[RMDB]
RNA sequence: GGGAACGACUCGAGUAGAGUCGAAAACGUACUUUUCACGCCGAAGCUGGGUGUGGAUCUGCUCGAGAGGCGUGUUGAAGACGUGAAGCCGAGGGGUCACCGCCACGUCUCGGAUGAAUCGCGACUUUUCAGAGAGCCAAUUCACCUCGGUCUCGAGAUGUAGUGGAUUUUUCGAAAUCCACUACAUAAAAGAAACAACAACAACAAC
Reactivity to DMS in 0.01 (KOAc 150mM, MgCl2 10mM, bicine 150mM(pH8.5), 24C), signal-to-noise 3, nucleotides 027 to 156: c060g010u000a090c060u000u000u000u000c020a030c010g000c010c000g030a060a140g010c070u000g020g010g030u000g050u000g010g000a090u010c060u000g000c000u010c020g010a120g010a180g020g020c030g040u000g020u010u000g000a080a060g020a040c010g040u010g010a130a130g010c010c010g000a070g000g010g010g010u010c040a130c090c060g000c060c040a070c020g000u000c030u010c020g020g010a110u000g000a060a120u000c060g020c010g010a040c030u000u000u020u000c110a210g000a270g000a030g030c000c040a100a110u000u000c010a020c020c020u000c030g010g020u000c020u010c000g020a170g010
Reactivity to 2A3 in 0.01 (KOAc 150mM, MgCl2 10mM, bicine 150mM(pH8.5), 24C), signal-to-noise 6, nucleotides 027 to 156: c020g040u120a110c040u030u040u030u050c070a050c080g050c020c000g100a080a050g050c070u080g050g000g000u130g020u040g080g020a050u060c040u090g010c010u020c020g050a050g020a030g050g030c030g010u020g030u030u090g040a030a000g020a010c010g010u020g010a060a010g050c080c090g030a060g040g030g010g040u100c040a050c200c080g050c040c030a050c020g210u000c010u000c010g060g030a080u100g090a070a060u110c040g010c020g070a140c030u080u090u060u090c120a030g040a010g000a010g120c020c020a020a020u040u030c020a070c010c000u010c010g000g030u020c010u020c020g100a140g010
Source: RMDB library OK3TST, as collected in RNAgym. This 207-nucleotide RNA was probed chemically with DMS and 2A3. The RNA was probed in 150 mM KOAc, 10 mM MgCl2 and 150 mM bicine (pH 8.5) at 24 C. 2A3 adducts were read by reverse transcription with SuperScript II with manganese.